[RMDB]
RNA sequence: GGGAACGACUCGAGUAGAGUCGAAAACCUCCAUAUCUCAAUCUCUUUGGUUGUACAAAGUGGUAUGGCUCAUCGAAUAAGCACAUACUGCUUUUCAGCUAAAGGAAUUGAGAUUUUGUAGGCUUUUAAUCAUUGCAAAUUUCGAUUUGCAAUGAUUAAAAGAAACAACAACAACAAC
Reactivity to 2A3 in 0.01 (KOAc 150mM, MgCl2 10mM, bicine 150mM(pH8.5), 24C), signal-to-noise 2, nucleotides 027 to 126: c000c010u010c040c000a040u020a010u010c000u000c000a000a010u010c010u000c000u030u000u000g020g000u000u030g010u040a090c120a050a020a050g010u020g030g000u010a000u000g010g000c020u000c020a280u090c040g110a120a110u190a200a010g000c020a020c000a250u000a000c000u010g000c000u020u000u000u040c020a000g000c010u010a010a010a000g000g000a010a000u000u000g000a010g000a000u030u040u010u000g000u010a020g140g140c000u010u000u000u030
Source: RMDB library RFM100, as collected in RNAgym.
Structure probing data (2A3) for a 177-nucleotide construct.
The 2A3 profile rests on 1,651 reads.
The reactions ran in a buffer of 150 mM KOAc, 10 mM MgCl2 and 150 mM bicine (pH 8.5), at 24 C.